This 207-nucleotide RNA was probed chemically with 2A3 and DMS. 2A3 is a SHAPE reagent: it acylates the 2'-hydroxyl of flexible nucleotides of all four kinds. For 2A3, 12,966 sequencing reads were counted. The reactions ran in a buffer of 150 mM KOAc, 10 mM MgCl2 and 150 mM bicine (pH 8.5), at 24 C.
[RMDB]
RNA sequence: GGGAACGACUCGAGUAGAGUCGAAAAGCGUACUACUAGUGGGUAGCGAGGCACACGAACUGUAUCCCAAAUAGGAUACUUAGUAGUGUGCUACCCACCGCUACCGUAACAUCUAGUAUCGCAAACUAGAGUAAGGCUUUCGAGCCUUACUCUAGAAACUGAUUAGGGUAUUCGUACCCUAAUCAGUAAAAGAAACAACAACAACAAC
Reactivity to 2A3 in 0.01 (KOAc 150mM, MgCl2 10mM, bicine 150mM(pH8.5), 24C), signal-to-noise 8, nucleotides 027 to 156: g010c010g040u100a070c050u000a000c000u000a030g010u040g100g000g000u000a000g010c000g000a010g000g030c000a000c010a000c000g000a050a000c020u000g000u000a010u020c020c040c050a150a250a110u300a060g000g000a000u010a000c000u010u010a010g010u010a000g000u000g000u010g000c010u010a000c010c000c000a010c000c000g010c000u000a000c010c000g060u090a070a060c030a160u120c010u010a000g010u010a020u300c010g000c030a050a070a040c000u000a000g000a000g000u000a000a000g000g010c000u050u110u230c300g030a000g000c000c000u000u000a000c000u000c000u000a000g000a000a000
Reactivity to DMS in 0.01 (KOAc 150mM, MgCl2 10mM, bicine 150mM(pH8.5), 24C), signal-to-noise 4, nucleotides 027 to 156: g010c000g010u010a070c080u010a020c030u000a090g040u000g030g000g040u000a000g000c010g020a180g030g000c000a030c010a000c020g000a160a230c290u000g010u000a010u000c000c000c040a060a150a300u000a080g010g010a030u000a010c000u010u000a090g030u000a150g010u000g030u000g010c000u000a010c030c000c030a300c110c000g010c000u000a010c000c000g040u000a060a120c090a230u000c020u000a010g000u000a030u000c020g010c010a080a080a200c010u000a000g000a040g010u010a020a010g020g020c010u000u010u010c260g010a050g020c000c000u000u000a000c000u000c000u000a000g000a070a110